[RMDB]
RNA sequence: GGGAACGACUCGAGUAGAGUCGAAAAGGGAGACCCGAGCAGAGGCAUAGCGAACUGCGCACGGGGAAGCCUUGAGGGAAGGCCGUAGGACCCGGGUUCGAUUCCCGGCUGCUCCACCGAAGGGCCACCUAUGGAGUGGCUUCGGCCACUCCAUAGGAAAAGAAACAACAACAACAAC
Reactivity to 2A3 in 0.01 (KOAc 150mM, MgCl2 10mM, bicine 150mM(pH8.5), 24C), signal-to-noise 3, nucleotides 027 to 126: g040g000g010a060g010a040c000c000c000g010a000g010c000a010g020a080g120g050c080a140u160a170g080c100g060a100a050c010u010g010c030g010c040a050c050g000g000g000g040a020a000g060c000c000u020u050g040a100g010g010g070a090a020g000g000c000c000g070u070a060g030g050a050c000c000c000g000g010g010u040u120c030g010a030u070u040c000c000c000g000g010c030u090g000c030u000c010c010a050c010c030g070a030a030g040g000g000c020c010a030
Reactivity to DMS in 0.01 (KOAc 150mM, MgCl2 10mM, bicine 150mM(pH8.5), 24C), signal-to-noise 3, nucleotides 027 to 126: g000g010g020a060g100a300c000c000c000g040a200g010c000a020g000a130g000g050c020a220u030a230g000c070g040a090a110c050u000g030c050g100c130a200c030g000g000g000g000a120a300g000c000c000u000u010g000a190g030g000g010a110a080g020g000c000c030g000u050a070g000g000a090c180c020c000g010g000g010u000u030c260g010a300u030u000c010c030c040g010g000c150u000g000c040u000c030c030a190c100c060g000a210a120g020g020g010c030c070a160

Source: RMDB library OK1LIB, as collected in RNAgym. This 177-nucleotide RNA was probed chemically with 2A3 and DMS. For 2A3, 2,523 sequencing reads were counted. The RNA was probed in 150 mM KOAc, 10 mM MgCl2 and 150 mM bicine (pH 8.5) at 24 C. As a SHAPE reagent, 2A3 marks flexible, mostly unpaired nucleotides at the ribose 2'-OH. In probing experiments dimethyl sulfate is read out at A N1 and C N3, which are open when not base-paired. 2A3 adducts were read by reverse transcription with SuperScript II with manganese.